[RMDB]
RNA sequence: GGGAACGACUCGAGUAGAGUCGAAAAGGGUUACCGUUCGCGGUAACCCAAAUAAAAUCAGCGGUAAGCUCCCGUAAAAUAUUACCGCUGAAGGGGAGCUUAAAAUCGAUGUGUUCGCACAUCGAAACAUUAUGGUGAGCUUCGGCUCACCAUAAUGAAAAGAAACAACAACAACAAC
Reactivity to 2A3 in 0.01 (KOAc 150mM, MgCl2 10mM, bicine 150mM(pH8.5), 24C), signal-to-noise 2, nucleotides 027 to 126: g010g010g000u000u000a020c020c000g000u000u060c250g000c020g090g000u010a010a000c000c000c010a010a000a000u020a000a030a000a060u020c010a000g010c000g000g030u020a040a020g020c030u040c030c000c010g010u050a110a190a030a040u250a070u060u020a010c000c000g010c000u000g000a000a000g010g020g010g010a060g000c010u090u090a040a100a020a120u080c000g010a000u000g030u010g000u030u050c170g050c070a000c000a020u010c000g000a000a000a000
Reactivity to DMS in 0.01 (KOAc 150mM, MgCl2 10mM, bicine 150mM(pH8.5), 24C), signal-to-noise 2, nucleotides 027 to 126: g000g010g000u000u000a010c000c000g030u000u000c160g010c010g000g000u000a000a010c000c000c000a000a010a050u000a050a120a140a100u000c000a000g000c010g000g020u000a010a000g030c280u020c010c000c020g010u000a090a080a170a100u020a060u000u000a000c000c020g000c000u000g020a030a060g000g010g030g010a230g010c160u000u000a060a030a090a060u000c000g000a020u000g020u000g020u000u000c200g020c000a010c000a000u000c000g000a020a030a130